RNA sequence: GGGAACGACUCGAGUAGAGUCGAAAACAGAACCGGCGUCUUCGACUUCACCGCCGAGGCGCAACGCUUGCGCUGGGCGUCAGCACACCUCACCGUGCCGGCGGUGCUGGACUUCGGGGUCGAGCAAAUGGACUGACUAGUUCGCUAGUCAGUCCAUAAAAGAAACAACAACAACAAC
Reactivity to DMS in 0.01 (KOAc 150mM, MgCl2 10mM, bicine 150mM(pH8.5), 24C), signal-to-noise 2, nucleotides 027 to 126: c110a070g020a070a090c060c000g000g000c010g030u040c080u010u020c080g000a080c040u070u000c040a290c190c070g020c010c010g000a060g010g000c000g060c030a040a040c300g010c090u000u020g000c030g070c020u020g000g000g000c000g000u000c070a120g000c040a090c080a080c090c070u020c100a180c060c020g000u060g040c000c000g000g020c000g000g030u000g050c100u000g030g000a060c140u050u020c010g000g000g030g020u030c030g000a030g000c180a080a150
Reactivity to 2A3 in 0.01 (KOAc 150mM, MgCl2 10mM, bicine 150mM(pH8.5), 24C), signal-to-noise 2, nucleotides 027 to 126: c070a010g060a050a050c010c000g000g000c030g070u050c050u140u060c010g020a030c010u050u040c070a090c090c010g000c000c010g030a140g050g000c020g000c020a030a080c120g120c130u110u070g020c010g000c030u070g010g080g030c010g020u060c020a010g020c020a000c000a020c030c020u160c030a070c020c060g040u050g020c010c010g010g000c020g000g000u000g000c000u000g010g050a100c050u050u030c190g040g000g000g010u010c000g010a030g030c010a030a150